RNA sequence: GGGAACGACUCGAGUAGAGUCGAAAAAACGGCGCACCCCAGCACGCCGGCGACCGUCACCAGCUCAGAGGCGAACCAUGGGCGCUGUCCGUGCAGUUUCCGGCUGACCGUGGCUUGUGUAAGUCCGGGCAUAGGUAUAAUUCGUUAUACCUAUGCCAAAAGAAACAACAACAACAAC
Reactivity to DMS in 0.01 (KOAc 150mM, MgCl2 10mM, bicine 150mM(pH8.5), 24C), signal-to-noise 9, nucleotides 027 to 126: a080a050c040g000g010c030g010c060a120c070c020c020c040a140g020c060a090c060g010c080c010g010g010c050g010a050c030c040g010u000c050a070c060c060a130g010c070u010c080a080g000a150g010g010c030g010a060a080c120c080a090u010g000g000g000c030g010c060u010g010u010c060c040g010u000g020c050a090g010u000u000u000c030c020g000g010c040u000g010a100c090c040g010u010g010g010c060u000u000g010u000g010u000a060a080g010u000c020c060g010
Reactivity to 2A3 in 0.01 (KOAc 150mM, MgCl2 10mM, bicine 150mM(pH8.5), 24C), signal-to-noise 3, nucleotides 027 to 126: a010a000c050g020g000c050g000c030a070c010c020c010c000a010g010c020a010c050g010c000c000g010g010c020g010a040c020c010g050u080c020a030c050c020a030g020c020u030c050a050g040a050g130g010c030g030a050a040c040c010a070u090g030g000g000c050g020c100u070g040u040c020c010g000u030g010c020a020g010u020u040u020c030c000g010g020c020u030g040a100c030c010g030u060g030g010c030u090u110g050u020g050u160a060a050g030u010c010c030g010
This 177-nucleotide RNA was probed chemically with DMS and 2A3. The reactions ran in a buffer of 150 mM KOAc, 10 mM MgCl2 and 150 mM bicine (pH 8.5), at 24 C. It was measured as part of the RMDB library OK2TST.